The record gives the reactivity of an RNA of 177 nucleotides to DMS and 2A3. 2A3 adducts were read by reverse transcription with SuperScript II with manganese.

RNA sequence: GGGAACGACUCGAGUAGAGUCGAAAAGUAGGAUCUCAUGCGCUACAUCUCUAGAGUACUGAGACACUGACAGCACAUGGUACCUAGGUACCUAGCCAUGCACAUGCUGAUCGUACCUCAUGCUAGGACAUGAUCUGCACUUCGGUGCAGAUCAUGUAAAAGAAACAACAACAACAAC
Reactivity to DMS in 0.01 (KOAc 150mM, MgCl2 10mM, bicine 150mM(pH8.5), 24C), signal-to-noise 2, nucleotides 027 to 126: g030u000a020g010g110a080u000c010u000c040a060u000g030c040g030c030u010a090c130a070u000c030u000c020u000a040g000a110g010u020a070c190u000g000a060g090a020c100a090c070u000g000a090c080a060g030c060a090c130a070u000g000g030u020a060c180c030u020a110g050g000u000a020c040c010u000a000g000c080c050a070u040g010c090a080c110a040u000g000c050u000g000a050u000c020g000u000a020c000c030u000c020a030u020g000c050u000a050g000g000
Reactivity to 2A3 in 0.01 (KOAc 150mM, MgCl2 10mM, bicine 150mM(pH8.5), 24C), signal-to-noise 2, nucleotides 027 to 126: g060u060a040g050g090a080u000c040u000c060a010u050g000c060g000c020u070a030c010a150u040c040u000c000u070a040g060a030g190u030a070c140u020g020a010g060a010c030a040c070u070g050a040c060a030g020c030a020c000a080u060g000g040u030a050c040c010u010a110g000g010u050a070c000c010u050a000g000c020c030a050u080g000c020a040c010a100u070g010c070u040g030a190u050c040g080u080a050c000c000u020c020a050u130g000c040u100a050g070g020

It was measured as part of the RMDB library OK2TRN. Reactivities are given for positions 27 through 126. The RNA was probed in 150 mM KOAc, 10 mM MgCl2 and 150 mM bicine (pH 8.5) at 24 C.